[RMDB]
RNA sequence: GGGAACGACUCGAGUAGAGUCGAAAACGACAGACGUUCGCGUCUGUCGAAAUACCGAGGUUGUUGCUCGGUAAAUAUCAACAACCCUUGGAAACAAGGGAAAAAGGAGAUGGUUCGCCAUCUCCAAGUCUACAUUCAUGUUCGCAUGAAUGUAGACAAAAGAAACAACAACAACAAC
Reactivity to DMS in 0.01 (KOAc 150mM, MgCl2 10mM, bicine 150mM(pH8.5), 24C), signal-to-noise 4, nucleotides 027 to 126: c010g000a010c000a000g010a020c000g020u000u020c260g030c010g040u010c000u000g000u000c000g010a010a070a120u010a210c000c000g000a000g010g010u000u000g010u000u010g020c020u000c000g000g010u000a010a030a070u000a120u000c070a030a060c110a080a110c010c000c000u000u000g000g000a160a100a250c010a010a010g010g010g020a010a010a040a140a090g000g020a010g010a020u000g000g000u000u000c220g000c010c000a000u000c010u000c000c000a020a030
Reactivity to 2A3 in 0.01 (KOAc 150mM, MgCl2 10mM, bicine 150mM(pH8.5), 24C), signal-to-noise 3, nucleotides 027 to 126: c000g000a000c000a010g010a010c000g030u070u060c200g030c010g090u010c000u000g000u000c000g000a000a010a010u090a000c000c000g010a010g030g010u030u040g010u040u040g050c000u000c000g000g000u000a010a000a000u090a010u030c020a020a070c020a040a070c020c000c000u010u000g000g010a080a030a030c010a000a020g010g020g040a060a010a000a020a000g010g000a000g000a000u010g000g020u050u060c200g010c070c000a000u000c010u000c000c000a000a000

Structure probing data (DMS and 2A3) for a 177-nucleotide construct.
The RNA was probed in 150 mM KOAc, 10 mM MgCl2 and 150 mM bicine (pH 8.5) at 24 C.
DMS adducts were read by reverse transcription with MarathonRT.